[RMDB]
RNA sequence: GGGAACGACUCGAGUAGAGUCGAAAAGUCAGUCACACAGUCACUCAGAGUGUGACUCACUGACUCUCUGACAGUGUGAGACAGUGAGACAGUGUCUCUCUCAGAGAGACAGUCUCUCAGUGUGUCAGCUGAUAGCAUUUUUCGAAAUGCUAUCAGCAAAAGAAACAACAACAACAAC
Reactivity to DMS in 0.01 (KOAc 150mM, MgCl2 10mM, bicine 150mM(pH8.5), 24C), signal-to-noise 7, nucleotides 027 to 126: g010u010c120a020g010u000c010a020c020a040c050a130g000u010c090a070c170u000c200a140g000a170g010u000g010u000g020a030c020u000c130a020c030u000g000a100c090u000c020u000c010u010g010a090c190a050g010u000g020u000g010a060g000a030c020a040g000u000g010a040g010a020c100a070g000u000g000u000c000u000c000u000c010u010c160a130g000a020g010a000g000a010c000a020g000u000c190u000c010u000c010a070g010u000g010u000g000u000c040a090
Reactivity to 2A3 in 0.01 (KOAc 150mM, MgCl2 10mM, bicine 150mM(pH8.5), 24C), signal-to-noise 5, nucleotides 027 to 126: g030u020c020a010g010u020c020a000c000a000c000a030g090u080c020a040c130u160c100a080g100a050g160u020g000u000g010a000c000u010c010a010c010u040g040a050c000u000c000u000c010u030g030a040c020a130g100u060g010u030g230a030g020a020c010a040g100u030g060a050g030a020c030a080g140u040g000u050c000u000c000u000c030u050c080a050g010a000g000a000g000a020c000a000g060u000c000u000c000u000c010a080g090u040g010u030g040u100c030a020